[RMDB]
RNA sequence: GGGAACGACUCGAGUAGAGUCGAAAACUCGAAAGAGACCUGCAUAUCUUAGGCAGAUGAACAAGUCGCGUCUGAAAAGCGAAAGCCCUAAGAUAUGCAGCUGUGAUGACUUGCCGCAGAAAAUAAAGGAUGGAGGAUAUUUCGAUAUCCUCCAUCCAAAAGAAACAACAACAACAAC
Reactivity to DMS in 0.01 (KOAc 150mM, MgCl2 10mM, bicine 150mM(pH8.5), 24C), signal-to-noise 2, nucleotides 027 to 126: c020u010c020g030a120a060a130g000a030g000a180c270c000u000g000c010a000u000a000u000c000u030u000a000g010g000c000a020g000a000u000g020a010a090c080a030a000g000u000c010g010c000g000u000c020u030g010a170a100a170a080g030c010g000a070a000a100g010c000c000c000u020a010a010g000a000u000a020u000g000c000a030g000c050u020g000u000g000a120u030g040a030c010u000u020g000c300c010g130c010a040g000a150a130a080a060u060a060a070a200
Reactivity to 2A3 in 0.01 (KOAc 150mM, MgCl2 10mM, bicine 150mM(pH8.5), 24C), signal-to-noise 5, nucleotides 027 to 126: c010u010c040g030a020a030a020g100a010g050a100c000c010u000g000c000a000u000a000u000c000u000u000a000g000g000c000a000g020a010u020g010a060a030c010a020a030g020u010c030g010c000g050u000c000u030g110a260a200a080a010g020c020g080a090a040a000g010c000c000c000u000a000a000g000a000u000a000u000g010c000a010g010c000u020g020u020g010a040u070g000a000c000u020u010g020c010c000g030c010a010g080a030a100a020a030u250a070a130a050